[RMDB]
RNA sequence: GGGAACGACUCGAGUAGAGUCGAAAAGAUAUGGAGACCGUGACAGAGUCCCAGUGGAGUGCCAGGUCUUCGGAAACGAAGACCGGUAAUUCUCCACCAGGACGACGAAGUCACGGUCUCCUAAGUCCUGAUUUAGGAAGUUCGCUUCCUAAAUCAGAAAAGAAACAACAACAACAAC
Reactivity to DMS in 0.01 (KOAc 150mM, MgCl2 10mM, bicine 150mM(pH8.5), 24C), signal-to-noise 2, nucleotides 027 to 126: g010a070u000a190u010g000g010a030g010a000c010c000g090u010g000a030c020a100g000a300g050u000c000c000c030a160g000u000g000g000a010g030u000g010c010c010a170g060g000u010c010u000u010c010g000g000a040a040a200c000g020a040a010g010a010c000c010g030g010u010a050a100u010u010c010u000c000c000a000c000c040a080g000g000a050c020g000a120c220g020a120a140g000u000c010a010c010g000g000u000c000u010c000c000u000a000a050g010u000c030